[RMDB]
RNA sequence: GGGAACGACUCGAGUAGAGUCGAAAAGAUUACGUGUCGUUGUGGAAUCGAUACUACGCAGGAGAUUCCAAGGUCUCUGUAGUACGUCCGCUGGUGACGUCUUUGGAGUCACGUUCGAUAUACGAAAGGUAAGAUGUAGGUUCGCCUACAUCUUACCAAAAGAAACAACAACAACAAC
Reactivity to DMS in 0.01 (KOAc 150mM, MgCl2 10mM, bicine 150mM(pH8.5), 24C), signal-to-noise 4, nucleotides 027 to 126: g000a150u010u020a060c080g010u010g000u000c010g000u020u020g010u000g020g000a040a060u050c020g000a150u000a030c010u000a010c060g020c180a180g010g010a100g000a010u010u010c160c260a100a080g020g000u000c010u000c000u000g020u010a000g000u020a000c000g000u010c000c010g000c080u050g000g000u010g010a020c000g010u010c050u000u040u030g020g000a120g000u000c010a030c020g010u040u030c010g000a060u020a050u050a110c050g000a050a070a120
Reactivity to 2A3 in 0.01 (KOAc 150mM, MgCl2 10mM, bicine 150mM(pH8.5), 24C), signal-to-noise 5, nucleotides 027 to 126: g080a040u110u190a040c050g010u030g030u030c010g020u060u140g000u050g040g030a040a030u180c030g040a020u020a030c000u000a010c030g090c110a080g080g050a010g000a020u080u040c090c030a100a050g130g000u000c000u000c060u130g000u010a000g010u020a000c000g010u000c000c010g010c110u120g070g080u100g020a010c040g150u030c030u100u060u210g070g020a030g000u020c020a000c050g000u080u120c020g000a020u000a000u010a160c060g010a070a110a030